Annotation
An RNA of 207 nucleotides, treated with 2A3 and DMS and read out base by base. 2A3 is a SHAPE reagent: it acylates the 2'-hydroxyl of flexible nucleotides of all four kinds. The RNA was probed in 150 mM KOAc, 10 mM MgCl2 and 150 mM bicine (pH 8.5) at 24 C.
[RMDB]
RNA sequence: GGGAACGACUCGAGUAGAGUCGAAAAUAAGCACCUCGUUAGGUGAGGCGGCUACACGAACAUAGGCCACUGACCCCGAACGUCGAGAGACGCCCCGGGUCAGGACAGCUAUUCCCGGCUUAAGGGUAAAAUCACAACGUCUUCGGACGUUGUGAAACAUAACGAUGAGAUUCGUCUCAUCGUUAUGAAAAGAAACAACAACAACAAC
Reactivity to 2A3 in 0.01 (KOAc 150mM, MgCl2 10mM, bicine 150mM(pH8.5), 24C), signal-to-noise 4, nucleotides 027 to 156: u180a020a010g020c010a010c020c000u010c020g140u140u300a120g010g110u180g070a010g030g010c090g050g030c020u080a040c080a020c100g180a250a010c060a140u160a100g140g000c010c010a040c020u000g010a000c000c000c010c070g050a060a020c000g000u000c000g010a030g000a010g000a140c000g020c000c030c020c010g020g000g000u000c000a000g000g020a010c030a000g000c000u020a040u050u010c000c000c000g000g000c040u130u130a060a060g060g000g040u080a090a070a010a110u020c000a000c000a000a000c000g010u000c000u030u060c200g070g000a000c000g000u000u000g010u000g000a000a000a000
Reactivity to DMS in 0.01 (KOAc 150mM, MgCl2 10mM, bicine 150mM(pH8.5), 24C), signal-to-noise 2, nucleotides 027 to 156: u010a070a090g010c010a070c000c000u000c000g000u010u010a160g040g000u010g020a060g000g000c020g010g070c000u000a060c120a100c060g010a110a090c100a150u000a100g000g020c000c000a140c020u000g010a060c010c000c000c000g000a010a040c010g020u000c000g000a300g000a300g000a040c020g040c010c020c040c160g000g030g030u030c010a020g000g000a090c070a100g030c060u000a130u000u000c000c010c000g030g000c060u010u000a100a110g010g010g020u000a030a060a090a200u000c010a020c000a000a020c000g000u010c000u000u000c300g070g020a010c000g000u000u010g000u000g010a020a050a120